The record gives the reactivity of an RNA of 177 nucleotides to 2A3. The data come from the RNA Mapping Database (RMDB), library OK1LIB. The reactions ran in a buffer of 150 mM KOAc, 10 mM MgCl2 and 150 mM bicine (pH 8.5), at 24 C.
RNA sequence: GGGAACGACUCGAGUAGAGUCGAAAAGACUGCGUGCACUAGAGACGAUAUCGAGCCGGAAAUUAAUCGAUAAUGUCUCGUGUAGUGGAUACGAUCCGGCAAGUAUCGACUACUUGUGCUCGUAGGACCUCAUCACGCGAUUCGUCGCGUGAUGAGGAAAAGAAACAACAACAACAAC
Reactivity to 2A3 in 0.01 (KOAc 150mM, MgCl2 10mM, bicine 150mM(pH8.5), 24C), signal-to-noise 2, nucleotides 027 to 126: g070a010c000u000g000c000g010u010g000c000a000c000u050a000g000a000g010a000c010g010a010u000a010u100c010g000a010g000c000c000g000g070a130a070a030u300u180a090a130u150c000g010a000u010a050a110u150g000u000c010u000c010g000u040g010u000a020g010u020g080g010a010u000a030c000g000a020u000c010c000g020g000c020a030a000g000u010a010u010c010g050a000c000u060a030c000u050u070g000u000g000c000u010c000g000u000a000g000g030a000